[RMDB]
Chemical mapping of a 207-nucleotide RNA with 2A3. For 2A3 the reverse transcriptase was SuperScript II with manganese. It was measured as part of the RMDB library M2RFPK.
RNA sequence: GGGAACGACUCGAGUAGAGUCGAAAAAGGCACUCCAUACCCUACUCCGACUCAAUACGUCCCCGUCGUACAGAAUGGUAACAUAUCUCUCCAAAUAGCUGAGCUUGGGUAUACGGGGAAACCCAACAAAAGCAAUUGUGGUUCGCCACAAUUGCAAUCUCCUUCUACACUUCGGUGUAGAAGGAGAAAAAGAAACAACAACAACAAC
Reactivity to 2A3 in 0.01 (KOAc 150mM, MgCl2 10mM, bicine 150mM(pH8.5), 24C), signal-to-noise 1, nucleotides 027 to 156: a060g090g010c030a060c020u020c020c010a080u070a120c000c000c000u070a100c020u030c040c030g020a050c030u020c080a060a120u040a010c040g030u060c010c000c000c010g020u030c010g000u030a050c030a110g140a160a140u080g080g000u100a140a020c020a080u130a150u030c080u000c010u050c070c010a030a040a200u140a060g000c120u130g030a010g000c030u070u090g000g000g020u020a050u000a050c010g060g000g000g000a010a020a000c010c010c000a010a030c010a040a170a000a000g000c000a000a010u000u010g000u000g010g070u000u030c120g010c120c000a000c000a010a000u000u000g000c000a000a000
The reactions ran in a buffer of 150 mM KOAc, 10 mM MgCl2 and 150 mM bicine (pH 8.5), at 24 C. For 2A3, 761 sequencing reads were counted.